Overview:
This 177-nucleotide RNA was probed chemically with DMS and 2A3. Conditions: 150 mM KOAc, 10 mM MgCl2 and 150 mM bicine (pH 8.5), 24 C.

RNA sequence: GGGAACGACUCGAGUAGAGUCGAAAAAGAUAUGGAGCUUUCUCUAGCGUGCUCUUGGAUUUAUGAUGAAACUACUCGGAAACGAGUAGGAGUACGUCAUUGUCAGAGUCGGGAAGCUCCUAAGUCAUCGCUAUUAGGAGUUCGCUCCUAAUAGCGAAAAAGAAACAACAACAACAAC
Reactivity to DMS in 0.01 (KOAc 150mM, MgCl2 10mM, bicine 150mM(pH8.5), 24C), signal-to-noise 1, nucleotides 027 to 126: a080g000a060u000a300u020g010g000a030g010c000u010u020u000c010u020c160u000a190g080c300g050u020g010c000u000c000u040u020g020g000a060u000u010u000a010u010g010a030u000g020a210a150a180c000u000a000c000u000c000g010g010a120a120a180c000g010a000g000u000a030g010g030a040g000u010a040c300g000u000c000a020u010u000g010u000c000a020g010a070g030u000c020g030g020g010a010a020g030c000u000c000c000u000a010a090g030u000c060a130
Reactivity to 2A3 in 0.01 (KOAc 150mM, MgCl2 10mM, bicine 150mM(pH8.5), 24C), signal-to-noise 1, nucleotides 027 to 126: a000g080a010u120a020u160g020g000a020g000c020u000u160u100c060u030c120u190a130g130c060g300u300g000c030u030c110u100u160g150g000a070u210u300u240a050u160g000a000u140g000a000a030a030c000u010a000c000u000c000g030g050a110a000a110c010g000a020g000u000a030g000g000a010g000u040a030c120g020u030c000a000u020u020g000u010c000a000g010a000g000u030c000g050g030g000a010a000g000c020u040c010c000u020a050a020g000u040c030a040
Annotation
For 2A3, 1,034 sequencing reads were counted. Source: RMDB library TTRDES, as collected in RNAgym.